[RMDB]
RNA sequence: GGGAACGACUCGAGUAGAGUCGAAAAUACUUCAAUUGAUUUUCCAUCCUUACCCCCACCAAGGCGGUCAAGAAGUAGAAGUAGGUCUCGCACUAGAGCGUUGACACCAAUAGAUUGGGAUGCUAUGUUGGGAGAACCAAAAAAUGUAAACAAUGUGCACAGUGAUUCUUUUCGAAGAAUCACUGUGAAAAGAAACAACAACAACAAC
Reactivity to 2A3 in 0.01 (KOAc 150mM, MgCl2 10mM, bicine 150mM(pH8.5), 24C), signal-to-noise 2, nucleotides 027 to 156: u060a030c060u050u050c070a090a300u070u100g040a060u120u100u110u070c000c000a020u090c020c000u040u170a150c000c010c000c000c070a000c020c030a020a000g060g020c020g000g020u010c040a030a060g000a010a010g010u040a000g010a090a010g010u060a000g000g020u020c000u050c070g120c000a010c010u040a000g000a000g130c010g050u030u040g110a090c080a100c070c010a010a010u110a050g120a130u030u060g040g000g000a030u050g000c000u030a020u120g090u050u030g070g070g010a090g040a020a060c030c060a040a050a000a000a030a030u180g020u140a050a030a030c010a100a070u140g030u100g030
Reactivity to DMS in 0.01 (KOAc 150mM, MgCl2 10mM, bicine 150mM(pH8.5), 24C), signal-to-noise 1, nucleotides 027 to 156: u000a000c030u010u010c010a100a160u000u010g010a080u010u010u000u020c020c040a110u010c000c040u010u000a260c050c000c020c000c010a220c150c020a030a110g020g000c200g020g010u000c050a060a150g010a040a010g000u010a050g010a150a050g000u000a080g060g000u020c030u010c050g070c050a090c070u000a070g010a080g000c090g020u000u000g030a090c090a140c020c020a050a080u000a080g030a130u000u000g010g000g010a080u010g020c010u010a060u000g000u010u000g000g010g010a120g010a040a070c040c030a000a020a070a050a070a070u020g040u000a060a050a090c050a050a070u000g030u010g010